Structure probing data (DMS) for a 177-nucleotide construct. DMS adducts were read by reverse transcription with MarathonRT.
RNA sequence: GGGAACGACUCGAGUAGAGUCGAAAAGAACUCACCUUCGGGUGAGUUCAAACCCGAUGAAGCGGCACUUAGACAGCUUCAUACUCCUAAGAAGUGCAAUAAAAACAACGCGGUUCGCCGCGUUGAAGGUAAACGUAAGGUUCGCCUUACGUUUACCAAAAGAAACAACAACAACAAC
Reactivity to DMS in 0.01 (KOAc 150mM, MgCl2 10mM, bicine 150mM(pH8.5), 24C), signal-to-noise 2, nucleotides 027 to 126: g010a010a010c000u000c010a010c010c020u000u020c180g030g000g040u000g030a020g020u010u000c000a040a100a090c010c000c000g020a030u030g000a030a000g000c000g020g030c000a020c080u000u000a050g010a070c070a190g020c000u000u000c000a020u000a200c090u000c130c140u000a140a140g000a010a020g020u000g030c000a230a140u020a030a030a120a110a190c020a000a000c000g030c020g000g020u000u020c240g010c010c000g000c000g010u010u000g010a030a050